[RMDB]
RNA sequence: GGGAACGACUCGAGUAGAGUCGAAAAGAUAUGGAACAUAAGGCUAUCGAUACAAUACGAACUACUGUCCCGUCGGAAACGACGGAGACAGCGUAUUGUAUCGAUAGCUAGUUAUGUUCCUAAGUCAUCGCUUAUAGGAGUUCGCUCCUAUAAGCGAAAAAGAAACAACAACAACAAC
Reactivity to DMS in 0.01 (KOAc 150mM, MgCl2 10mM, bicine 150mM(pH8.5), 24C), signal-to-noise 1, nucleotides 027 to 126: g000a050u000a300u000g010g010a010a040c000a000u000a020a120g000g000c000u000a000u010c010g020a020u000a000c020a020a020u000a000c010g020a050a060c140u000a300c010u000g000u000c000c000c010g000u010c010g000g000a160a100a300c020g010a000c000g000g000a080g020a000c000a000g010c000g000u000a000u000u000g030u000a020u000c000g000a000u000a010g020c000u000a000g010u000u000a010u000g000u000u000c000c000u000a010a120g010u000c070a130
An RNA of 177 nucleotides, treated with DMS and read out base by base. The reactions ran in a buffer of 150 mM KOAc, 10 mM MgCl2 and 150 mM bicine (pH 8.5), at 24 C. DMS adducts were read by reverse transcription with MarathonRT. The DMS profile rests on 1,517 reads.